[RMDB]
RNA sequence: GGGAACGACUCGAGUAGAGUCGAAAAAGUUGAGUCCACGGACUCAGCGCAUCAUUGGAUCGAGUGCCAAGAAAAGCCCCAGCGUAUGCUAAGCGACCCGUACCGCAAACCGACACAGGUGGGUGGGGUGGUCAUCAGGAUUCGUCCUGAUGACCACAAAAGAAACAACAACAACAAC
Reactivity to DMS in 0.01 (KOAc 150mM, MgCl2 10mM, bicine 150mM(pH8.5), 24C), signal-to-noise 2, nucleotides 027 to 126: a170g000u010u000g000a010g000u010c000c040a180c300g040g000a030c000u020c000a000g000c000g050c140a080u040c070a070u000u080g030g020a150u020c110g030a110g030u040g000c040c100a090a170g000a080a100a070a210g010c030c000c010c080a040g000c100g010u000a060u010g020c000u000a140a100g010c060g000a040c030c050c020g030u000a010c080c000g000c020a040a050a050c030c030g010a110c080a110c250a130g030g010u000g000g010g030u000g050g010g000
Reactivity to 2A3 in 0.01 (KOAc 150mM, MgCl2 10mM, bicine 150mM(pH8.5), 24C), signal-to-noise 3, nucleotides 027 to 126: a000g010u000u000g000a000g000u000c030c010a030c180g060g000a010c000u000c000a000g000c030g000c020a060u110c030a020u020u120g080g010a070u060c030g020a050g060u150g040c000c000a070a020g050a030a120a010a040g010c010c030c020c000a050g020c010g060u090a070u170g030c070u180a070a020g020c000g010a010c000c020c010g110u160a040c020c000g060c080a030a020a060c030c020g080a120c140a050c050a250g120g000u020g000g050g020u070g000g000g000